[RMDB]
RNA sequence: GGGAACGACUCGAGUAGAGUCGAAAACAUGACGAGUUCGCUCGUCAUGAAAGAAAGAAAGAUAGUCUGAAGCGGCAGACUAGCGCAAAAGAAAGAAAGAAAAAAGCAAACUCUUCGGAGUUUGCAACCUCCGAUAUUAGUUCGCUAAUAUCGGAGGAAAAGAAACAACAACAACAAC
Reactivity to DMS in 0.01 (KOAc 150mM, MgCl2 10mM, bicine 150mM(pH8.5), 24C), signal-to-noise 2, nucleotides 027 to 126: c020a010u000g000a010c000g000a000g010u020u010c220g040c000u000c000g000u000c000a010u010g000a080a110a140g000a130a060a090g000a130a060a080g010a120u000a000g010u000c000u000g000a110a080g000c040g010g030c010a010g000a010c020u000a000g000c020g000c190a060a070a040a070g000a060a130a120g000a050a060a100g010a000a060a050a160a100a050g000c000a010a010a020c000u020c000u000u000c260g020g020a010g010u000u000u000g000c000a040a070
Reactivity to 2A3 in 0.01 (KOAc 150mM, MgCl2 10mM, bicine 150mM(pH8.5), 24C), signal-to-noise 2, nucleotides 027 to 126: c000a000u000g000a020c010g000a020g000u040u110c080g110c090u000c000g020u000c000a000u000g000a000a000a010g060a000a050a000g070a050a130a020g060a060u020a000g000u000c010u010g010a120a010g070c060g060g040c030a000g000a010c000u020a020g020c100g000c080a060a070a090a090g150a120a100a030g110a040a140a010g070a030a230a020a020a010a010g000c000a000a000a010c000u000c000u060u150c290g050g000a000g000u010u000u030g010c000a000a000